[RMDB]
RNA sequence: GGGAACGACUCGAGUAGAGUCGAAAAGAUAUGGAUCGUGACCCGAGUUUCCUUGCGUUGAAAGCCACUUAACAUCGGAAACGAUGUUAAGUGGCUGGAGCAAGGUAGCUCGCACGAUCCUAAGUCAUCUCAUGUGAUAGUUCGCUAUCACAUGAGAAAAAGAAACAACAACAACAAC
Reactivity to DMS in 0.01 (KOAc 150mM, MgCl2 10mM, bicine 150mM(pH8.5), 24C), signal-to-noise 3, nucleotides 027 to 126: g010a050u000a300u000g010g000a000u000c000g000u000g000a170c210c240c110g030a000g020u000u000u000c000c000u000u000g010c010g000u000u010g000a210a180a070g000c000c000a010c000u000u000a000a010c000a010u000c000g020g000a200a120a300c000g020a010u000g000u000u000a000a010g000u000g000g000c000u000g000g000a050g000c010a020a000g000g010u000a010g010c010u000c000g000c010a000c000g000a000u010c000c000u000a020a020g000u000c020a130
Structure probing data (DMS) for a 177-nucleotide construct.
The RNA was probed in 150 mM KOAc, 10 mM MgCl2 and 150 mM bicine (pH 8.5) at 24 C.
Source: RMDB library TTRINS, as collected in RNAgym.
DMS adducts were read by reverse transcription with MarathonRT.